RNA sequence: GGGAACGACUCGAGUAGAGUCGAAAACUUCAGAUGUUGUAGACAGCAAUGAAAAUUUAACAUGGCCACUUGUUUUAGAAUGCACUAGGGCAUCCACUUCUGCCGUUAAGUUGCAAAAUAAUGAGAUUACGCGUGCGCUUCGGCGCACGCAAAAGAAACAACAACAACAAC
Reactivity to DMS in 0.01 (KOAc 150mM, MgCl2 10mM, bicine 150mM(pH8.5), 24C), signal-to-noise 2, nucleotides 027 to 129: c000u000u010c050a130g050a190u040g030u020u020g120u100a050g080a210c040a300g030c010a180a130u000g000a000a000a030a070u000u000u000a030a000c000a020u000g030g010c000c000a020c120u110u000g010u100u210u050u010a100g080a020a270u030g000c000a000c040u000a100g000g110g000c000a030u030c000c030a070c110u050u050c160u080g120c050c180g000u160u000a030a030g000u040u010g000c080a010a190a090a080u070a000a190u070g000a000g030a150u030u000a140c110